[RMDB]
RNA sequence: GGGAACGACUCGAGUAGAGUCGAAAACGAUUCCAGAUUUUGAUUUAGACGAUUUUAUUGACGCACCAUGCUAUUGCUUUAACGCUGAGGGUGAUGCAUCCUGGUCUUCUACUAUGAUCUUCUCUCUAUACACGCUGGUUCGCCAGCGUGAAAAGAAACAACAACAACAAC
Reactivity to 2A3 in 0.01 (KOAc 150mM, MgCl2 10mM, bicine 150mM(pH8.5), 24C), signal-to-noise 5, nucleotides 027 to 129: c020g040a050u060u030c030c000a010g030a050u070u070u040u140g100a080u060u090u130a050g030a070c060g010a040u000u080u150u080a190u080u180g040a040c010g000c000a010c020c000a020u080g090c050u060a060u070u140g000c010u010u120u150a040a000c010g000c020u000g040a020g020g050g000u010g000a030u040g010c010a020u000c000c030u040g000g000u030c000u020u000c000u050a070c020u030a040u210g030a020u000c000u010u000c000u030c020u000c000u000a030u040a170
Reactivity to DMS in 0.01 (KOAc 150mM, MgCl2 10mM, bicine 150mM(pH8.5), 24C), signal-to-noise 5, nucleotides 027 to 129: c210g000a220u040u020c050c010a220g020a200u030u010u000u030g010a130u050u020u010a080g030a080c120g060a000u010u000u040u020a080u050u050g030a160c000g090c070a140c090c030a070u030g030c070u000a130u000u000g030c050u030u090u020a010a010c130g020c040u060g030a110g010g000g050u040g000a040u010g050c000a060u000c040c040u070g010g050u020c000u020u070c060u050a110c150u010a110u050g020a000u050c060u040u030c030u000c040u040c100u030a080u000a000
The data come from the RNA Mapping Database (RMDB), library 15KLIB. Chemical mapping of a 170-nucleotide RNA with 2A3 and DMS. High 2A3 reactivity points to a flexible backbone, as in loops and unpaired stretches. 2A3 adducts were read by reverse transcription with SuperScript II with manganese. The 2A3 profile rests on 9,094 reads. Conditions: 150 mM KOAc, 10 mM MgCl2 and 150 mM bicine (pH 8.5), 24 C. For DMS the reverse transcriptase was MarathonRT. The DMS profile rests on 12,015 reads.